[RMDB]
RNA sequence: GGGAACGACUCGAGUAGAGUCGAAAAGCUUGAGCGGGACGGCCUCCUCAAAGCCACCUCCUUUGACAGCACCCGGCUGCUGCUGCAAUUUCCUUCCCCGCUCUCCGUGGGCGCCCACAGGACGCCACUAUGUGGAAGAGUUCGCUCUUCCACAUAGAAAAGAAACAACAACAACAAC
Reactivity to 2A3 in 0.01 (KOAc 150mM, MgCl2 10mM, bicine 150mM(pH8.5), 24C), signal-to-noise 3, nucleotides 027 to 126: g030c050u100u110g010a000g020c000g000g020g030a030c050g040g020c010c020u060c030c020u100c060a070a080a010g040c020c000a030c010c010u030c010c020u060u050u100g080a090c030a020g000c030a050c010c040c010g080g020c050u060g010c010u020g030c000u040g000c010a060a100u030u040u040c010c000u020u070c010c010c010c010g020c010u030c000u030c020c040g080u120g050g030g020c020g010c020c020c000a180c030a070g010g030a020c010g010c010c020a040
Reactivity to DMS in 0.01 (KOAc 150mM, MgCl2 10mM, bicine 150mM(pH8.5), 24C), signal-to-noise 6, nucleotides 027 to 126: g010c080u000u000g010a060g010c050g000g000g010a180c130g000g000c030c020u010c060c040u010c080a060a070a110g010c050c040a170c060c030u000c030c020u000u000u000g010a090c100a080g010c070a090c060c040c050g000g010c030u000g000c100u010g010c040u000g000c070a060a080u000u000u010c020c040u000u010c100c010c010c010g030c020u000c010u000c070c070g020u000g000g000g010c030g020c010c000c030a140c250a110g000g010a030c030g010c020c020a250
Chemical mapping of a 177-nucleotide RNA with 2A3 and DMS. For DMS, 7,619 sequencing reads were counted. It was measured as part of the RMDB library OK2TRN. The reactions ran in a buffer of 150 mM KOAc, 10 mM MgCl2 and 150 mM bicine (pH 8.5), at 24 C.